[RMDB]
RNA sequence: GGGAACGACUCGAGUAGAGUCGAAAACGACGUAGUUUCGACUACGUCGACAGGGAAAGGAGCCAAGUGGCGCCGACCACUUAAAAACACCGGAAAAUAAAAGAGCCCGUACUUUCGAGUACGGGAAUCACAAUUGAAGUUUCGACUUCAAUUGUGAAAAAGAAACAACAACAACAAC
Reactivity to DMS in 0.01 (KOAc 150mM, MgCl2 10mM, bicine 150mM(pH8.5), 24C), signal-to-noise 2, nucleotides 027 to 126: c010g020a020c000g000u000a010g000u000u000u000c120g010a030c010u000a020c000g000u000c000g020a030c120a080g000g000g000a040a050a070g010g000a100g020c040c110a100a020g000u000g000g000c000g000c000c000g000a180c010c000a000c000u000u000a020a010a000a020a000c160a010c020c010g000g000a050a110a070a140u010a060a040a180a240g010a250g000c010c000c000g030u000a010c000u000u000u030c170g020a040g000u000a000c000g000g000g020a000a000
Reactivity to 2A3 in 0.01 (KOAc 150mM, MgCl2 10mM, bicine 150mM(pH8.5), 24C), signal-to-noise 1, nucleotides 027 to 126: c000g000a000c000g010u000a000g050u000u090u090c210g060a040c000u020a000c000g000u010c000g000a030c020a030g060g010g060a000a100a130g030g030a020g110c000c030a030a000g020u010g000g020c000g020c040c000g180a300c040c000a020c000u150u210a000a000a000a010a000c080a030c000c050g010g000a150a230a000a050u050a010a120a040a040g110a000g200c000c000c000g030u000a010c010u050u090u110c180g050a000g020u000a000c000g000g000g000a000a000
This 177-nucleotide RNA was probed chemically with DMS and 2A3.
For 2A3 the reverse transcriptase was SuperScript II with manganese.
Conditions: 150 mM KOAc, 10 mM MgCl2 and 150 mM bicine (pH 8.5), 24 C.